[RMDB]
Structure probing data (2A3 and DMS) for a 177-nucleotide construct. For 2A3, 4,628 sequencing reads were counted. DMS (dimethyl sulfate) methylates the pairing face of unpaired adenines and cytosines. For DMS, 9,285 sequencing reads were counted.
RNA sequence: GGGAACGACUCGAGUAGAGUCGAAAAAGAGUAUUACAGGGAAGGAGGUGAAGAACCUCAUUACCCAAAUACUCCUGCUCCUCAUAGACGUACCUGGGAUGAGAGACACAAGGUUCUUAAAUUGUCCAUUAUAAUAGUGCUUCGGCACUAUUAUAAUAAAAGAAACAACAACAACAAC
Reactivity to 2A3 in 0.01 (KOAc 150mM, MgCl2 10mM, bicine 150mM(pH8.5), 24C), signal-to-noise 4, nucleotides 027 to 126: a000g000a000g000u000a000u010u060a070c160a060g020g000g000a010a030g030g010a010g030g000u020g010a090a130g140a120a020c000c000u000c010a000u000u060a130c000c010c020a020a010a000u000a000c000u000c000c010u040g040c010u020c000c010u050c020a110u130a070g090a060c050g020u030a040c010c020u050g050g000g030a030u040g040a040g020a010g020a060c010a000c020a140a060g060g000u060u020c010u050u160a230a280a170u090u080g030u020c020c010
Reactivity to DMS in 0.01 (KOAc 150mM, MgCl2 10mM, bicine 150mM(pH8.5), 24C), signal-to-noise 7, nucleotides 027 to 126: a070g000a020g010u000a010u010u000a100c270a280g000g000g010a140a090g010g010a020g000g010u010g000a130a130g000a150a010c000c000u000c010a050u010u000a160c000c000c010a050a030a010u000a010c000u000c000c030u000g020c140u000c010c000u010c110a100u010a060g010a060c070g010u000a030c040c020u000g010g010g010a070u010g010a100g000a070g010a060c040a050c100a070a080g010g000u000u000c040u000u000a040a060a100u000u000g010u010c050c060